[RMDB]
RNA sequence: GGGAACGACUCGAGUAGAGUCGAAAAUCCUUCCUUUUCGAAGGAAGGACAGUGCACAGUCUUCCCAUCUGUGAAUCACACAACAGCCGUGUCUAUGCGAGGUUUUAAUCAAGUUCGCUUGAUUAAAUAAUCAACACCAGUUCGCUGGUGUUGAUUAAAAAGAAACAACAACAACAAC
Reactivity to DMS in 0.01 (KOAc 150mM, MgCl2 10mM, bicine 150mM(pH8.5), 24C), signal-to-noise 3, nucleotides 027 to 126: u000c000c000u000u000c000c000u010u000u000u000c120g030a030a010g000g000a010a020g000g010a030c300a030g010u010g000c020a010c030a010g010u000c010u000u000c000c000c010a100u000c010u000g010u000g010a150a120u010c100a090c050a110c090a080a050c120a090g010c070c040g000u000g010u010c090u000a070u000g000c090g000a060g000g000u010u000u000u000a000a000u000c000a000a010g000u000u010c190g020c000u000u000g000a020u000u000a010a010a080
Reactivity to 2A3 in 0.01 (KOAc 150mM, MgCl2 10mM, bicine 150mM(pH8.5), 24C), signal-to-noise 2, nucleotides 027 to 126: u010c000c000u010u000c000c000u060u030u000u060c260g130a000a000g000g010a010a010g000g000a020c070a030g080u110g020c020a010c010a000g010u000c000u020u000c010c010c010a000u000c010u000g030u000g060a060a130u120c040a000c010a010c000a070a130c010a040g090c040c030g100u060g060u040c050u140a120u130g020c020g070a090g010g080u040u000u040u050a000a010u000c010a010a000g010u040u100c210g050c090u000u010g010a010u020u020a000a000a010
Structure probing data (DMS and 2A3) for a 177-nucleotide construct. DMS adducts were read by reverse transcription with MarathonRT. For 2A3 the reverse transcriptase was SuperScript II with manganese. The reactions ran in a buffer of 150 mM KOAc, 10 mM MgCl2 and 150 mM bicine (pH 8.5), at 24 C. Values cover nucleotides 27 to 126.